[RMDB]
RNA sequence: GGGAACGACUCGAGUAGAGUCGAAAACAGCCGAACAUUAUUCGGACAGGGAUGACCCUGUACCUGAUGAUGUGUCACUAACUAGAGUGACGUCCGUGCGUAGAAAUCAUCAUCUUUACGUGCGGCCACCGGUGAGCAAAUUCGUUUGCUCACCGGUAAAAGAAACAACAACAACAAC
Reactivity to DMS in 0.01 (KOAc 150mM, MgCl2 10mM, bicine 150mM(pH8.5), 24C), signal-to-noise 2, nucleotides 027 to 126: c110a100g010c020c040g020a130a100c020a040u000u000a000u010u000c300g000g000a110c010a000g020g000g040a280u020g000a230c000c000c010u010g000u000a040c000c000u000g010a000u000g000a000u000g010u000g010u000c000a000c010u000a140a180c170u000a170g010a030g010u000g000a040c000g010u000c030c000g030u000g020c000g020u000a000g020a000a040a070u020c210a120u020c200a080u000c050u000u000u000a010c010g040u020g000c000g000g000c300c080
Reactivity to 2A3 in 0.01 (KOAc 150mM, MgCl2 10mM, bicine 150mM(pH8.5), 24C), signal-to-noise 3, nucleotides 027 to 126: c050a010g110c030c040g050a050a010c010a020u020u030a020u070u080c010g000g030a010c010a010g090g020g060a270u300g300a300c030c010c000u010g000u210a300c000c000u000g030a000u010g000a000u000g020u050g010u000c000a010c000u080a280a020c030u050a050g050a020g220u010g000a010c010g020u040c010c010g010u010g020c020g000u020a020g100a060a090a030u140c090a090u080c020a020u000c110u020u040u010a000c010g010u000g020c000g000g000c010c040

Background: An RNA of 177 nucleotides, treated with DMS and 2A3 and read out base by base. For 2A3, 2,042 sequencing reads were counted. 2A3 adducts were read by reverse transcription with SuperScript II with manganese. The DMS profile rests on 1,084 reads. DMS adducts were read by reverse transcription with MarathonRT.